Source: RMDB library OK1LIB, as collected in RNAgym. Structure probing data (2A3) for a 177-nucleotide construct. The 2A3 profile rests on 845 reads.
RNA sequence: GGGAACGACUCGAGUAGAGUCGAAAAGAAGAGAAGCGCGCGAAUUGGAAACCAGCGAACCCUAUUACGCGCGCAAGGAACCGGGCCUUGGUUCUUUGGAAAGAUUAGAUAAUAUCGCUGGUAAAGAGCCUGGUAAUGGAUUCGUCCAUUACCAGGCAAAAGAAACAACAACAACAAC
Reactivity to 2A3 in 0.01 (KOAc 150mM, MgCl2 10mM, bicine 150mM(pH8.5), 24C), signal-to-noise 1, nucleotides 027 to 126: g200a040a000g070a000g000a120a000g070c000g000c000g000c000g000a010a010u010u010g000g050a040a100a240c010c010a000g000c000g030a030a040c030c000c010u000a060u010u150a150c000g000c000g010c000g010c000a000a000g020g000a000a000c000c000g090g180g050c120c080u020u040g070g000u020u000c040u000u000u000g050g060a080a120a010g040a040u100u240a000g070a120u100a250a020u060a130u140c000g000c020u010g000g000u030a030a070a030g020a000